[RMDB]
RNA sequence: GGGAACGACUCGAGUAGAGUCGAAAAUGGUGGCCAGCGCCAUUGAGCAGGGCGUUUCACGUGAGGGCUUACAACAGCUAUUGCCUGCUGGAGCGGCGAGAAAUGCGGUCGAUUGUGCAUUAUGGCAUCAGGGGUAUACGUUCGCGUAUACCCCUGAAAAAGAAACAACAACAACAAC
Reactivity to DMS in 0.01 (KOAc 150mM, MgCl2 10mM, bicine 150mM(pH8.5), 24C), signal-to-noise 2, nucleotides 027 to 126: u000g000g010u010g020g020c020c020a110g020c100g020c030c030a050u000u010g020a130g030c070a110g000g000g010c050g010u010u000u000c030a090c040g040u000g010a100g020g000g010c000u000u000a080c120a070a090c080a040g010c050u000a120u000u000g020c140c010u010g000c030u000g000g010a050g030c000g010g010c020g000a100g000a050a070a060u000g000c020g010g010u000c060g010a110u000u000g030u000g010c030a070u000u010a150u000g000g000c080a130
Reactivity to 2A3 in 0.01 (KOAc 150mM, MgCl2 10mM, bicine 150mM(pH8.5), 24C), signal-to-noise 1, nucleotides 027 to 126: u090g000g040u040g060g060c030c010a050g020c010g000c010c020a010u030u000g030a030g030c050a100g090g080g000c020g010u070u050u030c080a050c030g040u050g090a220g000g150g040c000u080u190a080c050a130a040c040a050g000c010u080a070u250u250g040c010c000u040g000c000u000g030g000a030g020c070g050g000c000g010a050g100a040a140a040u190g010c040g000g020u040c000g050a020u010u140g080u080g040c030a070u060u080a050u300g100g000c020a060

Source information:
Conditions: 150 mM KOAc, 10 mM MgCl2 and 150 mM bicine (pH 8.5), 24 C. An RNA of 177 nucleotides, treated with DMS and 2A3 and read out base by base. For DMS the reverse transcriptase was MarathonRT. The DMS profile rests on 2,191 reads. The 2A3 profile rests on 1,085 reads.